[RMDB]
RNA sequence: GGGAACGACUCGAGUAGAGUCGAAAAGAUAUGGAUGAUCGACCCUUCGCCGGUGAAAUACCACUCCAUCGGAAACGAUGGGUGGGAGAAGCGAUCAUCCUAAGUCAAAGCCACCUUCGGGUGGCAACUACACAGGCAUGUUCGCAUGCCUGUGUAGAAAAGAAACAACAACAACAAC
Reactivity to 2A3 in 0.01 (KOAc 150mM, MgCl2 10mM, bicine 150mM(pH8.5), 24C), signal-to-noise 2, nucleotides 027 to 126: g010a010u030a010u050g000g000a000u040g000a000u000c010g040a170c260c060c000u050u030c070g020c070c110g300g150u300g140a190a130a090u100a020c000c000a000c040u100c030c010a010u000c020g000g010a000a000a000c010g010a000u000g000g020g020u010g000g000g000a110g030a000a000g080c010g010a020u000c000a010u000c020c000u000a010a000g020u000c000a120a070a040g010c000c000a010c000c020u080u080c300g150g000g030u000g000g000c000a000a010
Reactivity to DMS in 0.01 (KOAc 150mM, MgCl2 10mM, bicine 150mM(pH8.5), 24C), signal-to-noise 2, nucleotides 027 to 126: g000a020u000a000u000g000g000a020u010g000a000u000c010g010a300c300c200c010u000u000c030g060c300c300g000g090u010g000a070a070a060u010a070c000c000a000c000u020c010c030a010u000c020g060g010a000a000a040c000g000a000u000g010g000g030u000g000g010g020a030g000a100a100g000c000g000a000u000c000a000u000c000c000u000a010a050g000u000c000a090a140a220g030c000c010a010c000c000u010u010c140g000g020g020u000g000g010c000a010a020